[RMDB]
RNA sequence: GGGAACGACUCGAGUAGAGUCGAAAAUCCAUCCCCCCCCCCAGGAGGUCCCCCCAGGAAUGGCGGGACCCCACUCUGCAGGGUCCGCGUUCCAUUCUUUCUUACCUUGUGGCCGGCAUGGUCCCAGAUAGUCUCAACUUCGGUUGAGACAAAAGAAACAACAACAACAAC
Reactivity to DMS in 0.01 (KOAc 150mM, MgCl2 10mM, bicine 150mM(pH8.5), 24C), signal-to-noise 2, nucleotides 027 to 129: u020c070c030a080u070c010c000c000c010c010c000c000c000c000c000a070g000g000a070g020g020u030c010c020c010c020c020c060a060g020g010a010a000u000g000g050c130g000g000g030a000c010c040c030c050a040c130u040c160u040g050c120a190g010g040g030u000c000c010g020c050g020u020u020c020c030a080u010u020c040u010u020u020c030u000u050a090c060c040u030u010g020u040g000g040c070c040g000g040c070a070u040g000g040u000c020c010c020a070g010a100u000a100
Reactivity to 2A3 in 0.01 (KOAc 150mM, MgCl2 10mM, bicine 150mM(pH8.5), 24C), signal-to-noise 1, nucleotides 027 to 129: u000c030c000a050u020c020c000c010c000c000c010c010c000c000c020a020g000g010a100g040g020u020c000c000c000c000c000c000a000g030g030a000a010u060g150g060c020g010g010g020a000c000c000c000c000a020c000u240c090u140g070c070a080g020g010g010u010c000c000g040c000g090u110u010c010c000a040u030u010c000u000u060u000c010u060u010a050c010c000u010u120g030u080g040g040c010c000g000g020c040a080u100g010g000u000c000c020c000a000g010a050u070a050